An RNA of 177 nucleotides, treated with DMS and 2A3 and read out base by base. High DMS reactivity at an A or C suggests that its Watson-Crick edge is free. The 2A3 profile rests on 3,063 reads. Conditions: 150 mM KOAc, 10 mM MgCl2 and 150 mM bicine (pH 8.5), 24 C. 2A3 adducts were read by reverse transcription with SuperScript II with manganese. Source: RMDB library M2PK50, as collected in RNAgym.

RNA sequence: GGGAACGACUCGAGUAGAGUCGAAAACAUGGAGUGUUCGCACUCCAUGAAAAUGCGGACGGCAGCGCAAGACGGGCCGACGUCAAUAAAUGCCGUAAUAAAAAAUCUAUCUGUUCGCAGAUAGAAAGUUUUAUCUUGAGUUCGCUCAAGAUAAAACAAAAGAAACAACAACAACAAC
Reactivity to DMS in 0.01 (KOAc 150mM, MgCl2 10mM, bicine 150mM(pH8.5), 24C), signal-to-noise 2, nucleotides 027 to 126: c000a000u000g010g010a030g030u000g030u000u030c240g000c020a010c000u000c000c020a000u000g000a030a070a050a080u010g000c010g000g000a050c010g000g000c000a020g050c010g010c000a060a180g000a020c010g000g000g020c040c110g000a100c000g010u000c030a040a060u020a050a070a090u000g010c000c000g000u000a070a040u020a010a020a070a130a160a100u000c000u000a000u000c000u000g030u000u030c170g000c000a010g000a010u020a000g000a010a030a050
Reactivity to 2A3 in 0.01 (KOAc 150mM, MgCl2 10mM, bicine 150mM(pH8.5), 24C), signal-to-noise 2, nucleotides 027 to 126: c010a010u000g010g000a020g010u000g000u050u210c200g040c070a000c000u020c000c010a000u010g010a010a000a000a030u080g000c000g030g000a010c000g010g000c000a030g020c020g000c020a010a070g010a010c000g050g040g120c060c040g050a120c000g010u010c010a070a080u070a160a070a040u020g010c020c030g000u030a030a030u100a020a090a010a010a000a020u010c000u000a000u010c000u010g040u030u030c240g000c080a000g000a010u010a000g000a000a030a000